The record gives the reactivity of an RNA of 177 nucleotides to 2A3 and DMS.
The reactions ran in a buffer of 150 mM KOAc, 10 mM MgCl2 and 150 mM bicine (pH 8.5), at 24 C.
For 2A3 the reverse transcriptase was SuperScript II with manganese.
RNA sequence: GGGAACGACUCGAGUAGAGUCGAAAACAGUCAUCGCGUCACACUCUCCAAGAUUUGCUCUUACAAAUGGAGUUAUUUUCGCCAAUUGUAUAAAUACAAUUUGUAGGUGUCAAGACAAUGGUAAGACGCCUUACCUCUCAUUCGUGAGAGGUAAGGCAAAAGAAACAACAACAACAAC
Reactivity to 2A3 in 0.01 (KOAc 150mM, MgCl2 10mM, bicine 150mM(pH8.5), 24C), signal-to-noise 1, nucleotides 027 to 126: c030a000g080u080c060a070u050c060g000c020g070u040c030a060c010a020c010u060c010u020c040c000a060a000g010a140u040u050u060g010c020u020c000u120u090a070c040a010a110a050u150g020g000a090g030u000u090a140u070u060u060u020c050g030c030c000a040a070u000u050g010u080a090u040a120a130a070u120a030c000a010a020u000u040u100g040u020a020g000g030u000g040u010c030a060a000g060a050c030a010a100u070g000g080u090a110a010g070a020c090
Reactivity to DMS in 0.01 (KOAc 150mM, MgCl2 10mM, bicine 150mM(pH8.5), 24C), signal-to-noise 1, nucleotides 027 to 126: c120a190g040u020c090a000u010c040g000c070g040u000c060a020c130a080c090u020c010u000c010c000a050a070g000a030u000u010u000g020c110u000c070u010u000a070c030a020a010a050u020g000g000a050g000u000u000a100u000u000u000u000c090g000c090c100a040a020u000u000g000u000a100u010a040a030a160u000a020c050a030a040u000u000u000g000u000a010g020g040u000g010u010c020a040a050g000a090c080a080a120u000g000g000u020a070a090g010a100c190